Record summary: Chemical mapping of a 177-nucleotide RNA with DMS. It was measured as part of the RMDB library RFMREP. The DMS profile rests on 992 reads. High DMS reactivity at an A or C suggests that its Watson-Crick edge is free. The RNA was probed in 150 mM KOAc, 10 mM MgCl2 and 150 mM bicine (pH 8.5) at 24 C.

[RMDB]
RNA sequence: GGGAACGACUCGAGUAGAGUCGAAAAAGGGACCAGGAUGAUGGCUGGCCAAAUCCAGCUGGUCAUGGAGCCGGAGGCACGCGGUGACCGGACGCGGUGGCCUGUCGUGCCGGCAGAAACUGCGGAGCUUGUUGGAUACGUUCGCGUAUCCAACAAGAAAAGAAACAACAACAACAAC
Reactivity to DMS in 0.01 (KOAc 150mM, MgCl2 10mM, bicine 150mM(pH8.5), 24C), signal-to-noise 1, nucleotides 027 to 126: a110g030g030g010a200c080c000a040g030g030a060u000g000a060u000g020g010c000u000g000g020c100c120a080a070a140u000c010c030a080g040c010u000g030g000u000c020a100u000g020g000a110g020c010c030g000g020a150g000g000c000a020c000g000c050g000g020u000g000a060c020c000g020g010a240c280g000c040g020g010u000g000g000c020c000u000g030u010c000g030u000g000c000c020g000g020c090a050g000a030a070a120c070u000g000c000g000g000a120g030